[RMDB]
RNA sequence: GGGAACGACUCGAGUAGAGUCGAAAAGGAGGAAGAUGAAGAUAACUGAGAAGUAGAAAAUAUUAGUUUUGUUUAACUCACAUGUUGAAACAAGUAGAAUAUAGCUAUGACUAUCAAAGUUGGUUUAUGUGGAUUGUCUAUUCGUAGACAAUCCACAAAAAGAAACAACAACAACAAC
Reactivity to 2A3 in 0.01 (KOAc 150mM, MgCl2 10mM, bicine 150mM(pH8.5), 24C), signal-to-noise 4, nucleotides 027 to 126: g070g030a000g030g010a060a090g010a020u150g020a040a080g050a100u110a120a030c030u050g060a010g040a110a000g000u080a030g060a020a290a060a000u080a040u060u060a050g100u040u090u010u010g030u000u070u010a040a020c040u080c050a170c080a150u300g010u010u030g070a010a010a010c000a030a000g050u040a000g070a040a010u040a000u010a010g030c070u000a010u180g000a090c010u040a060u270c000a080a020a030g000u020u020g050g050u080u130u040a140
Reactivity to DMS in 0.01 (KOAc 150mM, MgCl2 10mM, bicine 150mM(pH8.5), 24C), signal-to-noise 2, nucleotides 027 to 126: g010g000a080g040g010a030a050g020a100u000g000a110a080g000a070u010a030a070c100u000g000a200g010a020a090g000u000a060g000a020a100a060a020u000a000u000u030a130g010u000u000u030u000g010u000u000u010a020a000c020u010c300a080c300a120u030g010u020u000g010a030a000a030c000a000a000g000u010a050g000a030a010u000a020u000a010g000c070u030a000u000g000a120c030u000a080u000c090a090a090a060g000u010u000g010g020u010u000u000a050